Structure probing data (DMS and 2A3) for a 207-nucleotide construct.
For DMS the reverse transcriptase was MarathonRT.
It was measured as part of the RMDB library OK3TST.
The RNA was probed in 150 mM KOAc, 10 mM MgCl2 and 150 mM bicine (pH 8.5) at 24 C.
The 2A3 profile rests on 1,918 reads.

RNA sequence: GGGAACGACUCGAGUAGAGUCGAAAAUAGAAUUGCGCGAUCGAAGGUUGAAUUUUGAAUGGUGGAAACCUGAGUACGGAAUUAAUCUCUAUCAGGACUAUUACAGGCAAGAUGGAUUUGUUGAAAUUCCAGAUCAGAAUAAUCCUUCAUUUGGUGACUCUAAAUAAGAGUUCGCUCUUAUUUAGAGAAAAGAAACAACAACAACAAC
Reactivity to DMS in 0.01 (KOAc 150mM, MgCl2 10mM, bicine 150mM(pH8.5), 24C), signal-to-noise 2, nucleotides 027 to 156: u000a150g010a100a120u000u000g020c040g070c020g020a070u000c090g020a080a070g010g010u000u040g020a120a050u000u010u010u010g010a050a090u010g020g030u000g010g010a080a110a090c060c010u000g010a090g000u000a150c070g030g010a090a110u000u000a060a140u000c030u000c010u000a120u000c050a050g020g010a210c050u000a090u010u000a120c140a110g010g000c060a070a070g000a120u000g030g000a090u010u010u000g010u000u000g000a080a090a140u000u010c000c010a030g000a140u010c040a100g020a040a060u000a090a120u000c000c000u000u000c050a110u020u000u020g020g020u000g000a120
Reactivity to 2A3 in 0.01 (KOAc 150mM, MgCl2 10mM, bicine 150mM(pH8.5), 24C), signal-to-noise 2, nucleotides 027 to 156: u140a020g080a030a070u100u110g000c030g010c030g090a070u020c050g010a080a030g040g000u030u050g030a090a090u070u060u060u130g030a050a010u050g030g000u010g040g000a030a060a040c010c000u010g000a000g020u090a030c050g010g020a010a010u060u060a060a060u050c020u000c010u060a050u020c030a020g120g000a030c030u070a050u230u140a080c090a040g050g000c030a040a080g020a040u050g000g030a030u050u080u160g070u030u030g050a070a060a040u060u000c010c000a010g010a050u030c010a010g040a060a010u080a070a040u070c010c000u040u050c020a040u030u040u060g060g000u040g030a020